[RMDB]
RNA sequence: GGGAACGACUCGAGUAGAGUCGAAAAGAUCUUGGCUAACUGCAACCUCUGCCUCCCAGGUUCGAGCAAUUUUCCUACCUCAGCCUCCUGAGUAGCUGGGAUUAUAGGUGUGCGCCACCAUGCCCAGCAGUGAGACGUUCUUCGGAACGUCUCACUGAAAAGAAACAACAACAACAAC
Reactivity to DMS in 0.01 (KOAc 150mM, MgCl2 10mM, bicine 150mM(pH8.5), 24C), signal-to-noise 1, nucleotides 027 to 126: g040a060u010c040u000u000g010g020c020u000a070a110c070u000g000c040a080a070c080c030u000c020u000g000c040c040u000c050c040c030a120g000g010u010u010c050g010a100g010c070a080a070u010u000u000u000c000c010u000a120c140c030u000c020a040g000c040c060u000c030c010u000g030a090g010u000a060g030c010u000g000g000g010a060u010u010a050u000a050g020g040u000g010u000g010c190g010c120c010a040c060c010a070u010g010c000c000c000a010g010